[RMDB]
RNA sequence: GGGAACGACUCGAGUAGAGUCGAAAAACAUGACAUUAGCUAGUUUUGCAUUUCAUGUGCUGAUAACCCCAUCCAGGCAAUGAGUUGUGAGUGGCCCUUAGAUGGCUGUGUCAUUACCCCCCACUCACCACAAGGAAGGUUUCGACCUUCCUUGUGGAAAAGAAACAACAACAACAAC
Reactivity to DMS in 0.01 (KOAc 150mM, MgCl2 10mM, bicine 150mM(pH8.5), 24C), signal-to-noise 2, nucleotides 027 to 126: a090c160a030u000g010a040c080a040u000u010a040g010c030u000a080g020u020u010u000u000g030c030a050u000u000u000c090a020u000g020u010g030c080u010g010a090u010a090a150c090c040c020c030a100u000c110c140a060g030g010c030a100a040u000g010a040g010u010u010g020u000g010a060g030u000g000g000c060c040c040u010u020a080g000a130u000g000g000c020u000g000u010g010u000c010a010u000u000a240c020c030c010c030c010c010a100c110u010c070a170